Chemical mapping of a 177-nucleotide RNA with 2A3 and DMS.
RNA sequence: GGGAACGACUCGAGUAGAGUCGAAAAGCUCUAGGAGACUAGAGCGAUACGUUAGAGAGCUCGUGGCAUGACUAACGGAUAGCCAGGGACGAGGUUGCCAGAGGACAUAGCUAUAGCUAUGUCCAAAGAGCUAUCUAUGCUUCGGCAUAGAUAGCUCAAAAGAAACAACAACAACAAC
Reactivity to 2A3 in 0.01 (KOAc 150mM, MgCl2 10mM, bicine 150mM(pH8.5), 24C), signal-to-noise 2, nucleotides 027 to 126: g000c000u000c000u000a040g050g070a110g020a090c000u000a000g000a000g040c000g000a000u050a000c000g010u010u080a030g010a010g020a010g090c000u000c030g170u090g120g000c000a030u100g060a160c030u020a100a000c070g020g080a020u020a000g180c030c010a000g030g010g020a020c040g060a030g000g170u040u030g030c030c100a040g000a000g040g000a000c000a020u000a000g000c020u120a060u000a300g000c000u000a000u020g040u050c000c000a000a000a000
Reactivity to DMS in 0.01 (KOAc 150mM, MgCl2 10mM, bicine 150mM(pH8.5), 24C), signal-to-noise 2, nucleotides 027 to 126: g060c000u000c010u000a020g000g000a300g000a120c000u020a000g000a000g000c000g000a130u030a010c010g030u000u030a020g010a200g000a090g050c110u000c120g020u060g020g000c020a080u010g020a090c010u000a010a060c120g010g000a160u010a050g010c030c040a110g000g000g000a050c050g020a110g000g020u020u020g000c070c010a070g010a300g000g000a000c030a000u000a010g000c060u060a120u050a140g000c010u000a000u000g000u000c000c000a000a020a090
The reactions ran in a buffer of 150 mM KOAc, 10 mM MgCl2 and 150 mM bicine (pH 8.5), at 24 C. It was measured as part of the RMDB library OK1LIB. 2A3 adducts were read by reverse transcription with SuperScript II with manganese.